[RMDB]
An RNA of 177 nucleotides, treated with DMS and 2A3 and read out base by base. 2A3 adducts were read by reverse transcription with SuperScript II with manganese. DMS adducts were read by reverse transcription with MarathonRT.
RNA sequence: GGGAACGACUCGAGUAGAGUCGAAAAGCCGGAUCGGGUACUGGCGUACGGCGACUGCGCGAUCAUCCCGAACCCGACGGUGGAGCAGCUCGCUGAUAUCGCCAUCUGCUCGGCACGCACCGCCGCAGCUCGAACCAUAGUUCGCUAUGGUUCGAGCAAAAGAAACAACAACAACAAC
Reactivity to DMS in 0.01 (KOAc 150mM, MgCl2 10mM, bicine 150mM(pH8.5), 24C), signal-to-noise 1, nucleotides 027 to 126: g020c000c000g030g000a110u010c150g000g020g010u000a110c070u000g000g010c000g070u000a010c000g020g000c030g000a020c010u060g000c030g000c090g030a120u040c120a120u040c100c010c000g000a090a080c040c030c000g000a050c000g040g010u000g000g000a250g010c030a000g030c270u000c080g000c060u030g000a130u010a030u010c040g020c000c030a000u020c130u000g020c000u030c010g000g030c250a060c160g000c110a050c000c020g020c000c040g060c210a110
Reactivity to 2A3 in 0.01 (KOAc 150mM, MgCl2 10mM, bicine 150mM(pH8.5), 24C), signal-to-noise 4, nucleotides 027 to 126: g080c010c000g020g020a090u040c020g020g000g020u060a090c100u060g000g020c010g000u010a010c010g030g010c010g010a010c000u010g010c050g010c070g120a100u200c030a060u110c030c000c000g010a080a050c020c080c010g060a040c010g000g040u130g070g050a050g000c010a010g010c050u010c030g000c010u010g020a110u040a050u190c060g000c000c010a020u000c010u030g000c000u000c000g020g010c040a010c080g030c020a050c030c030g050c020c020g040c040a010